[RMDB]
RNA sequence: GGGAACGACUCGAGUAGAGUCGAAAAUCCGGACGAUCUACGCAUGGACAAGAUGAAGCGUGCCGAAAGGCACGUGGAAGUCUGUUAGAGUUGGUGUCCUACAAUACCCUCUCGUGAUCUAUGUGUAGGGGUGAAAGGCCCAUCGAGUCCGGCAACAUCAUUUUAAAAAGUUCGCUUUUUAAAAUGAAAAAGAAACAACAACAACAAC
Reactivity to 2A3 in 0.01 (KOAc 150mM, MgCl2 10mM, bicine 150mM(pH8.5), 24C), signal-to-noise 4, nucleotides 027 to 156: u020c010c000g000g010a010c010g010a070u010c010u010a000c000g000c000a000u010g010g000a010c030a040a020g010a030u230g010a020a000g000c010g020u000g000c010c010g120a130a080a070g000g000c000a000c010g010u000g000g000a070a040g010u000c020u040g070u110u150a050g000a000g000u030u090g030g000u040g020u060c000c060u050a040c060a000a060u040a060c000c000c000u000c000u000c010g050u060g110a290u000c020u010a000u000g010u000g000u010a010g030g000g000g000u030g100a270a090a060g180g030c030c010c000a010u100c080g030a030g020u000c000c000g010g010c010a010a020c010a030
Reactivity to DMS in 0.01 (KOAc 150mM, MgCl2 10mM, bicine 150mM(pH8.5), 24C), signal-to-noise 3, nucleotides 027 to 156: u000c000c020g010g010a050c010g030a140u000c010u000a040c010g000c010a030u010g030g030a050c030a140a060g020a050u000g000a300a300g000c000g020u000g010c020c000g040a170a180a240g010g000c010a000c000g020u000g000g000a230a300g010u000c000u000g030u000u020a110g000a060g030u000u000g010g020u000g010u000c040c030u010a110c070a050a060u000a020c000c000c020u010c020u000c040g010u000g010a130u000c030u000a010u000g000u010g000u000a030g030g000g020g010u000g000a020a120a210g000g000c010c010c000a120u010c070g010a230g000u000c000c000g010g000c110a020a050c090a180
Structure probing data (2A3 and DMS) for a 207-nucleotide construct. It was measured as part of the RMDB library PDB130. DMS adducts were read by reverse transcription with MarathonRT. For DMS, 6,449 sequencing reads were counted. The RNA was probed in 150 mM KOAc, 10 mM MgCl2 and 150 mM bicine (pH 8.5) at 24 C.